The data come from the RNA Mapping Database (RMDB), library OK3TST. An RNA of 207 nucleotides, treated with DMS and 2A3 and read out base by base. Reactivities are given for positions 27 through 156. For 2A3, 1,447 sequencing reads were counted. 2A3 adducts were read by reverse transcription with SuperScript II with manganese. 2A3 is a SHAPE reagent: it acylates the 2'-hydroxyl of flexible nucleotides of all four kinds. The reactions ran in a buffer of 150 mM KOAc, 10 mM MgCl2 and 150 mM bicine (pH 8.5), at 24 C. For DMS, 3,800 sequencing reads were counted. DMS adducts were read by reverse transcription with MarathonRT.
[RMDB]
RNA sequence: GGGAACGACUCGAGUAGAGUCGAAAACUGUACCCCUCGGGCCACGUUGAGUGCGCGCUGUAGGCGCGCCAGGCGCAUCACCUCGCUGAGGUGGUCGGCGUUUACGUACAUGACGUUUGACGACCUGGGGGCCCAGAAGGUUUCUAUCGGGGACCACCAUAUGCCUAUUUUUCGAAAUAGGCAUAUGAAAAGAAACAACAACAACAAC
Reactivity to DMS in 0.01 (KOAc 150mM, MgCl2 10mM, bicine 150mM(pH8.5), 24C), signal-to-noise 1, nucleotides 027 to 156: c020u010g020u000a050c020c010c000c000u000c030g020g040g020c000c010a030c050g000u010u000g000a170g080u000g040c030g020c020g090c000u000g050u000a130g040g030c010g020c010g060c010c040a050g010g010c000g010c020a100u000c000a020c030c020u000c010g050c130u000g010a030g040g030u000g010g050u000c020g010g020c000g030u000u000u010a120c100g030u000a110c150a140u010g000a020c000g020u000u000u010g050a040c000g010a050c000c010u040g020g020g000g010g030c000c040c010a080g010a120a070g000g000u000u000u000c000u010a130u000c060g000g000g020g010a170c010c020a100c210
Reactivity to 2A3 in 0.01 (KOAc 150mM, MgCl2 10mM, bicine 150mM(pH8.5), 24C), signal-to-noise 2, nucleotides 027 to 156: c030u040g050u120a050c000c000c000c000u020c010g020g000g000c070c060a030c020g010u020u030g030a020g030u180g020c000g010c000g030c000u110g230u300a130g110g000c000g010c000g020c000c000a020g010g030c010g000c000a000u020c000a020c000c010u080c010g300c300u300g010a000g020g000u010g000g000u050c100g090g000c020g020u000u020u050a010c020g030u040a040c050a280u220g250a020c030g010u000u000u150g020a020c000g050a190c000c000u000g000g000g000g000g040c020c000c000a020g020a060a050g060g020u040u050u070c060u060a180u170c130g000g020g010g060a030c010c050a010c000